[RMDB]
RNA sequence: GGGAACGACUCGAGUAGAGUCGAAAAGAAAGAGCCUGAAUACGGAGAACCGUAACGCAUGACCGAAUAUUCAGCCCAGUUCACGACGUAAGUCGUGCGCCCGAGUCUAUGUCUGGGCGCUGGGGUCACGUACAUGCGUCAGGCAGGACAUAGAGAACAAAAUUAAUCAUUUCGAUGAUUAAUUUUGAAAAGAAACAACAACAACAAC
Reactivity to DMS in 0.01 (KOAc 150mM, MgCl2 10mM, bicine 150mM(pH8.5), 24C), signal-to-noise 4, nucleotides 027 to 156: g000a100a080a090g010a190g010c020c010u010g010a100a220u010a040c020g020g020a200g020a100a170c030c010g040u000a090a270c020g010c020a010u000g010a140c030c030g040a110a150u010a160u000u000c100a150g000c010c020c000a070g020u000u000c030a030c010g010a020c020g020u020a130a230g030u000c000g030u000g020c040g030c000c010c010g010a120g010u010c050u010a040u010g010u000c020u000g000g010g010c010g030c020u000g010g010g020g010u000c070a090c070g010u000a130c020a030u010g010c000g010u000c020a040g010g030c000a070g000g000a040c010a050u000a030g000a160g000a130a300
Reactivity to 2A3 in 0.01 (KOAc 150mM, MgCl2 10mM, bicine 150mM(pH8.5), 24C), signal-to-noise 7, nucleotides 027 to 156: g070a010a090a020g090a020g000c000c000u030g070a100a040u070a040c020g010g020a120g130a300a220c010c000g010u010a020a000c000g000c000a000u010g010a040c060c050g070a160a060u160a140u250u190c070a090g070c000c000c000a030g020u150u170c020a000c000g000a010c010g050u110a120a090g010u000c000g010u010g010c030g000c000c000c000g030a030g050u000c010u030a020u020g010u000c010u070g000g000g000c000g000c010u010g000g000g010g020u090c070a010c080g020u060a100c000a000u000g000c000g010u010c000a000g000g010c000a000g060g000a000c010a010u020a000g020a010g010a060a010